[RMDB]
RNA sequence: GGGAACGACUCGAGUAGAGUCGAAAAUCAUGGCGGCUGUCAGGUGCUGUAUGCGGAAGAUAACGUGGUGGUAUUUGUCCGCGUGCUGAAUCAGCAACGUGUACUGGUGGCAAUCAACCGUGGCGAGGACUGACUGACGAUUCGUCGUCAGUCAGUCAAAAGAAACAACAACAACAAC
Reactivity to 2A3 in 0.01 (KOAc 150mM, MgCl2 10mM, bicine 150mM(pH8.5), 24C), signal-to-noise 1, nucleotides 027 to 126: u050c030a020u070g040g030c070g030g000c010u040g000u150c010a020g000g040u080g040c040u070g070u050a150u150g040c020g050g050a020a020g020a090u030a030a110c040g040u080g070g140u140g000g030u180a240u060u080u100g220u030c010c000g020c020g000u000g000c000u120g060a090a110u220c000a000g030c000a000a040c040g020u020g030u130a020c020u020g020g000u020g020g000c010a010a120u040c040a020a080c010c010g050u030g060g000c070g000a060g090
Reactivity to DMS in 0.01 (KOAc 150mM, MgCl2 10mM, bicine 150mM(pH8.5), 24C), signal-to-noise 1, nucleotides 027 to 126: u010c060a090u010g000g030c120g030g000c010u000g000u000c080a050g000g040u010g020c030u010g030u050a040u000g010c020g000g010a030a060g020a060u000a060a010c110g040u010g000g060u000g000g020u000a050u000u000u000g030u000c010c000g000c020g070u000g000c090u000g000a140a100u000c040a020g000c010a130a050c080g010u000g010u010a040c010u000g030g040u000g000g000c050a180a060u010c250a060a050c010c010g000u020g010g020c120g000a160g010